RNA sequence: GGGAACGACUCGAGUAGAGUCGAAAAUCCUAAGUCACGCUAUGUUCGUCUUGGACCGCAGUUGUCAGGCUCGGAAACGAGCCUUGGAUUUACUGCGCUAGACGAACUAAGGCGUGAUAUGGAAAAAUGCAAGACAGCUUUCGAGCUGUCUUGCAAAGAUUCAUCUUCUGUUCGCAGAAGAUGAAUCAAAAGAAACAACAACAACAAC
Reactivity to 2A3 in 0.01 (KOAc 150mM, MgCl2 10mM, bicine 150mM(pH8.5), 24C), signal-to-noise 4, nucleotides 027 to 156: u010c000c010u020a130a020g020u010c000a000c000g000c010u030a010u200g010u000u010c010g010u020c020u060u110g080g080a150c100c080g000c020a000g010u020u010g010u020c010a000g000g000c000u010c000g050g000a100a090a050c010g000a010g000c030c010u000u050g020g010a010u080u060u250a010c000u000g000c000g010c000u000a000g000a000c000g000a000a000c000u000a000a010g000g000c000g000u000g000a000u000a040u020g000g060a040a110a050a020a010u080g000c000a000a000g010a000c000a010g000c000u020u080u270c300g070a000g000c000u010g000u000c000u000u000g000c000a000a000a000
Reactivity to DMS in 0.01 (KOAc 150mM, MgCl2 10mM, bicine 150mM(pH8.5), 24C), signal-to-noise 2, nucleotides 027 to 156: u010c010c000u010a020a270g010u010c010a050c010g030c030u000a300u000g010u000u000c000g050u010c010u000u000g090g020a100c220c050g010c000a040g050u000u000g010u000c020a080g020g020c000u000c000g000g020a180a170a260c000g020a000g010c000c000u000u000g010g030a030u000u000u000a000c000u000g040c030g000c000u020a030g020a040c020g020a010a030c030u010a050a110g010g000c000g050u000g000a000u000a070u000g020g000a000a140a150a190a190u000g010c020a010a030g020a040c020a000g010c000u000u000u000c300g000a050g020c020u000g000u000c000u000u000g000c000a000a050a060